[RMDB]
RNA sequence: GGGAACGACUCGAGUAGAGUCGAAAAGGAGUGCUACCGAAAGGUAGCACUCCAACAAAUCGGUGUAAGUACAGCCUGUCUUACACCGUGCGGCACAGCGGAAACGCUGAUGUCGUAUACAAGGCUACAUACUAUUUACCUUCGGGUAAAUAGUAUGAAAAGAAACAACAACAACAAC
Reactivity to DMS in 0.01 (KOAc 150mM, MgCl2 10mM, bicine 150mM(pH8.5), 24C), signal-to-noise 5, nucleotides 027 to 126: g010g010a010g030u000g000c000u000a000c000c010g010a130a120a180g020g020u000a000g000c000a000c000u000c000c000a020a060c110a050a060a050u000c010g010g010u000g000u000a000a000g010u010a070c130a060g010c010c010u010g000u000c000u000u000a010c000a010c000c000g010u010g010c000g000g000c000a010c000a020g000c000g010g000a140a120a230c010g010c000u000g000a050u000g030u000c000g020u000a040u010a080c200a070a130g020g030c000u000a300
Reactivity to 2A3 in 0.01 (KOAc 150mM, MgCl2 10mM, bicine 150mM(pH8.5), 24C), signal-to-noise 3, nucleotides 027 to 126: g010g000a010g010u000g000c010u000a000c000c010g060a070a070a070g010g000u000a000g000c010a000c000u000c000c000a000a000c000a000a000a010u080c000g000g000u000g010u010a010a010g010u020a080c030a030g020c010c010u070g050u110c000u010u010a000c000a000c020c000g000u020g000c000g000g000c000a000c000a000g000c010g010g040a070a060a010c010g000c010u000g010a060u000g000u000c000g000u010a010u020a010c060a030a000g010g000c000u010a010